An RNA of 207 nucleotides, treated with DMS and 2A3 and read out base by base. For DMS, 2,716 sequencing reads were counted. The 2A3 profile rests on 3,386 reads. The RNA was probed in 150 mM KOAc, 10 mM MgCl2 and 150 mM bicine (pH 8.5) at 24 C. DMS adducts were read by reverse transcription with MarathonRT. Source: RMDB library OK3TST, as collected in RNAgym. Values are in units of 0.01, from 0 to 300, in steps of 10.

[RMDB]
RNA sequence: GGGAACGACUCGAGUAGAGUCGAAAAAGAUGCUGUCCAUAGCUUUGAACUUGCCGAAGGCCUGCAUGGGACUCAUAUACUUCUCUUACUGGCAUUUGAUGGAGAUCACGUGGGAUGCCUUCACUGUUUGUACCACGAUGUUCAUCGUACAAACACACUCGUUAGAGUGGUUCGCCACUCUAACGAGAAAAGAAACAACAACAACAAC
Reactivity to DMS in 0.01 (KOAc 150mM, MgCl2 10mM, bicine 150mM(pH8.5), 24C), signal-to-noise 1, nucleotides 027 to 156: a070g000a090u000g030c000u000g010u000c010c050a070u000a120g000c020u020u000u000g010a040a070c070u000u000g030c010c020g010a090a090g020g040c010c030u000g010c080a060u010g020g000g000a040c060u000c020a070u000a140u020a070c060u000u000c030u000c040u000u000a060c050u040g000g030c050a040u000u020u010g010a060u000g010g030a080g000a060u000c050a100c120g000u010g020g030g020a090u000g010c030c030u010u000c020a160c030u000g010u020u000u000g000u000a030c030c040a190c050g010a110u000g030u000u020c070a040u000c050g020u000a010c000a000a030a030c020a040c090a200
Reactivity to 2A3 in 0.01 (KOAc 150mM, MgCl2 10mM, bicine 150mM(pH8.5), 24C), signal-to-noise 5, nucleotides 027 to 156: a000g080a020u080g000c060u040g020u040c000c000a060u060a080g030c030u110u080u140g060a100a070c020u050u090g040c040c050g100a100a050g050g010c010c020u060g030c050a080u120g020g010g030a080c010u030c090a030u070a020u040a150c040u060u050c020u000c000u070u100a120c060u130g040g010c020a060u030u030u080g030a040u030g040g020a040g030a140u120c050a030c160g000u010g020g020g000a010u040g000c000c000u110u130c080a070c090u050g000u000u020u000g020u010a020c030c020a050c090g010a060u070g090u120u120c040a020u020c020g000u010a000c010a010a020a010c020a000c000a020